Chemical mapping of a 177-nucleotide RNA with DMS and 2A3. Source: RMDB libraries RFM100 and RFMREP, as collected in RNAgym. DMS adducts were read by reverse transcription with MarathonRT. 2A3 adducts were read by reverse transcription with SuperScript II with manganese. Conditions: 150 mM KOAc, 10 mM MgCl2 and 150 mM bicine (pH 8.5), 24 C. Values cover nucleotides 27 to 126.
[RMDB]
RNA sequence: GGGAACGACUCGAGUAGAGUCGAAAAAUUAUCGUUUGAUUCCGGAGAGGGAGCCUGAGAGACGGCUACCAGGUCCAAGGACAGCAGCAGGCGCGAAAAUUACCGCAGCCUGCGUUCAGGGCGGUAGUAUCAUGACGCAGUUCGCUGCGUCAUGAUAAAAAGAAACAACAACAACAAC
Reactivity to DMS in 0.01 (KOAc 150mM, MgCl2 10mM, bicine 150mM(pH8.5), 24C), signal-to-noise 4, nucleotides 027 to 126: a070u010u020a030u000c040g000u020u000u020g000a130u040u000c010c010g000g000a140g000a240g000g000g010a050g000c020c020u000g000a180g000a180g000a160c170g000g010c000u000a060c040c000a050g020g000u010c020c010a150a100g010g010a020c170a110g010c130a080g030c010a010g000g010c000g020c020g000a060a050a080a120u040u050a090c160c010g010c000a080g020c010c000u000g010c030g010u010u000c170a090g010g020g010c010g000g000u010a040g020
Reactivity to 2A3 in 0.01 (KOAc 150mM, MgCl2 10mM, bicine 150mM(pH8.5), 24C), signal-to-noise 2, nucleotides 027 to 126: a000u170u080a060u050c080g030u000u050u140g110a130u140u000c010c000g000g080a060g000a010g090g050g000a000g000c020c020u050g000a030g000a000g030a000c120g070g000c000u030a160c040c000a000g040g090u000c000c020a030a010g030g000a010c000a020g000c030a040g050c000a010g020g010c020g000c020g090a040a180a000a000u260u080a110c070c000g000c010a060g060c000c000u000g010c000g000u010u020c000a000g000g010g000c000g000g000u010a020g020